An RNA of 177 nucleotides, treated with 2A3 and DMS and read out base by base. 2A3 adducts were read by reverse transcription with SuperScript II with manganese. The RNA was probed in 150 mM KOAc, 10 mM MgCl2 and 150 mM bicine (pH 8.5) at 24 C.
RNA sequence: GGGAACGACUCGAGUAGAGUCGAAAAAGGAGGAUCUGCUGUACAUGACUUCCCGUGGAAUCGACCCACGCUCUGCGCGAAACAUGCUCGUCGAGGGCUUCUUCGUGCCCGUCUUAGAAGAGAUCGCGCUAUGGAGGAGUUUCGACUCCUCCAUAGCAAAAGAAACAACAACAACAAC
Reactivity to 2A3 in 0.01 (KOAc 150mM, MgCl2 10mM, bicine 150mM(pH8.5), 24C), signal-to-noise 2, nucleotides 027 to 126: a000g050g020a040g020g040a220u030c020u080g020c060u080g050u160a060c030a060u110g030a040c020u070u000c030c010c000g000u010g000g040a050a090u060c030g030a090c000c000c020a010c020g050c010u000c050u070g000c010g010c010g000a030a050a050c080a050u110g010c010u000c030g090u020c050g060a090g000g010g000c000u070u050c030u040u060c060g040u040g060c010c000c000g080u060c080u060u180a090g040a180a000g010a010g020a060u070c030g000c010
Reactivity to DMS in 0.01 (KOAc 150mM, MgCl2 10mM, bicine 150mM(pH8.5), 24C), signal-to-noise 3, nucleotides 027 to 126: a090g010g000a050g030g010a080u010c040u000g010c040u010g020u000a150c080a050u000g010a100c080u000u000c020c010c000g000u010g010g000a120a110u020c070g010a120c040c000c020a050c070g010c050u000c050u010g020c030g010c050g020a050a060a110c130a060u010g010c010u000c040g000u010c130g000a120g000g000g010c000u000u010c090u000u000c060g000u020g010c000c050c030g000u000c060u000u010a110g020a070a060g010a140g000a090u000c060g030c140